[RMDB]
RNA sequence: GGGAACGACUCGAGUAGAGUCGAAAAAUACCUCAGCACAUAGCUUUACUCUGAGAUAAGCCCUCUCUCCUUUGCUCUUUCUCCCAUGCUUUCUGGAGUUUGUCUGCAGGAUGCAGGUUUUGAACUGCCCAUCGCAAUUAUUCGUAAUUGCGAUGGGAAAAGAAACAACAACAACAAC
Reactivity to 2A3 in 0.01 (KOAc 150mM, MgCl2 10mM, bicine 150mM(pH8.5), 24C), signal-to-noise 1, nucleotides 027 to 126: a000u110a050c000c000u030c030a040g000c030a020c030a090u140a010g020c000u040u100u040a050c020u020c010u080g060a080g010a220u090a100a030g000c010c020c000u020c000u000c000u020c020c020u060u070u030g010c030u050c000u010u010u000c050u040c010c030c000a020u070g000c010u020u050u000c010u050g000g030a050g050u000u120u140g100u150c000u010g010c000a040g060g050a010u140g000c000a030g040g070u050u010u180u150g090a080a050c020u140g050
Reactivity to DMS in 0.01 (KOAc 150mM, MgCl2 10mM, bicine 150mM(pH8.5), 24C), signal-to-noise 2, nucleotides 027 to 126: a110u020a080c050c020u010c050a100g010c090a100c080a100u010a100g010c070u000u010u020a110c130u000c000u040g010a100g010a110u010a050a150g010c030c020c010u010c030u000c030u000c000c010u010u000u010g010c030u000c010u000u000u000c100u010c020c020c030a130u010g010c030u000u000u030c030u000g040g020a020g000u000u000u020g000u010c000u000g020c010a070g010g000a110u000g010c010a050g000g000u000u000u010u010g010a070a100c230u000g010